[RMDB]
RNA sequence: GGGAACGACUCGAGUAGAGUCGAAAAACUAGUAUGUACACGAUGAGACUGCCGUGUCGUCUAGACUGCGGAUCCAAUAAUCUCAGAUCUGCGAGAUAUUGUCUCCAGAGUACGAGACAAGUACUCAGUGUAAUGACUACUUCGGUGGUCGUUACACAAAAGAAACAACAACAACAAC
Reactivity to DMS in 0.01 (KOAc 150mM, MgCl2 10mM, bicine 150mM(pH8.5), 24C), signal-to-noise 9, nucleotides 027 to 126: a120c010u000a010g010u050a010u000g010u060a000c010a020c010g010a100u020g020a130g010a110c110u020g010c080c010g010u010g000u000c010g000u000c010u000a010g000a220c080u010g020c040g000g000a020u000c040c110a070a080u020a000a120u020c110u010c100a110g010a060u010c040u010g000c070g000a050g000a080u020a060u010u020g000u000c020u000c010c020a080g010a060g010u020a050c070g010a080g020a090c190a060a080g000u010a030c020u000c020a160
Reactivity to 2A3 in 0.01 (KOAc 150mM, MgCl2 10mM, bicine 150mM(pH8.5), 24C), signal-to-noise 9, nucleotides 027 to 126: a000c010u010a010g050u090a030u040g060u060a010c010a000c010g040a050u100g020a030g090a060c060u080g080c040c010g000u010g000u000c000g000u000c000u010a020g020a110c030u050g010c010g010g000a010u000c020c020a030a050u160a100a110u050c060u020c060a020g010a070u000c010u030g020c030g030a010g000a010u130a030u030u060g020u000c010u000c010c000a020g020a010g070u040a020c010g010a010g030a040c030a040a010g010u010a010c000u000c030a010
An RNA of 177 nucleotides, treated with DMS and 2A3 and read out base by base. For 2A3 the reverse transcriptase was SuperScript II with manganese. The data come from the RNA Mapping Database (RMDB), library OK1LIB. The reactions ran in a buffer of 150 mM KOAc, 10 mM MgCl2 and 150 mM bicine (pH 8.5), at 24 C.